[RMDB]
RNA sequence: GGGAACGACUCGAGUAGAGUCGAAAACCAGAAUACUGGAAGCUUGGAUAGGCGUCAAGCUUUCCGAUGCAAGGCUAUGAGUUGACAGCGCAUCGGAAUAGGCUACGCGUGGUGAAAUAGGCACCAGGUUUCAUCAUUGAUUCGUCAAUGAUGAAACAAAAGAAACAACAACAACAAC
Reactivity to 2A3 in 0.01 (KOAc 150mM, MgCl2 10mM, bicine 150mM(pH8.5), 24C), signal-to-noise 9, nucleotides 027 to 126: c010c000a020g140a090a200u260a120c010u020g010g020a170a050g050c030u050u040g070g070a040u090a110g100g010c020g030u060c100a060a000g000c000u010u000u000c000c000g000a000u000g010c070a160a090g220g000c020u090a090u260g110a170g260u210u180g180a130c070a050g000c020g000c010a000u000c000g010g000a020a040u100a070g040g000c010u040a000c020g010c030g070u110g020g060u110g090a080a170a120u160a070g010g000c010a020c010c000a010g020
Reactivity to DMS in 0.01 (KOAc 150mM, MgCl2 10mM, bicine 150mM(pH8.5), 24C), signal-to-noise 4, nucleotides 027 to 126: c010c000a140g000a130a090u030a180c020u000g000g000a040a070g010c010u000u030g040g000a110u030a090g010g000c010g000u000c120a080a020g030c000u000u000u000c000c000g010a010u000g030c010a200a110g010g010c010u000a150u050g000a160g040u020u010g020a170c180a040g000c100g000c010a000u010c010g020g000a020a040u020a040g010g020c010u000a060c080g000c010g010u010g040g000u010g000a060a070a110u040a060g000g000c020a180c020c010a040g000